[RMDB]
RNA sequence: GGGAACGACUCGAGUAGAGUCGAAAAUAAAAUAGCGUACUAGAGACGCUGAUCUCUAGAUAACUACGAACUCUAGAGAUACGGUCCAAUUGAAUACAAGGACAGUUGGACCUAUUCGAAGAAAAAAGUAUUUGGUAUGGUUCGCCAUACCAAAUACAAAAGAAACAACAACAACAAC
Reactivity to DMS in 0.01 (KOAc 150mM, MgCl2 10mM, bicine 150mM(pH8.5), 24C), signal-to-noise 2, nucleotides 027 to 126: u020a100a030a140a130u000a030g030c010g010u000a130c020u020a090g010a120g020a000c000g010c060u000g000a050u020c000u010c000u000a020g020a020u010a060a050c190u000a160c130g000a060a100c110u000c000u000a020g000a030g000a010u000a030c160g000g000u000c000c000a000a000u000u000g010a090a050u010a080c300a110a180g010g010a300c000a000g000u000u000g000g000a010c020c000u000a020u000u000c080g010a220a030g000a000a050a050a000a130a090
Reactivity to 2A3 in 0.01 (KOAc 150mM, MgCl2 10mM, bicine 150mM(pH8.5), 24C), signal-to-noise 2, nucleotides 027 to 126: u150a040a060a020a110u070a020g000c010g010u030a010c040u080a070g100a080g000a090c000g000c070u000g040a030u020c000u000c000u000a010g020a040u100a070a090c150u220a040c070g060a090a020c030u010c010u020a000g000a010g020a040u010a050c060g020g000u000c000c000a010a020u020u000g020a040a020u160a160c060a100a050g160g030a040c000a010g010u010u000g000g000a000c000c000u000a090u030u180c030g050a030a060g120a080a080a000a050a000a000
Structure probing data (DMS and 2A3) for a 177-nucleotide construct. The 2A3 profile rests on 1,483 reads. For DMS the reverse transcriptase was MarathonRT. For DMS, 846 sequencing reads were counted. The reactions ran in a buffer of 150 mM KOAc, 10 mM MgCl2 and 150 mM bicine (pH 8.5), at 24 C.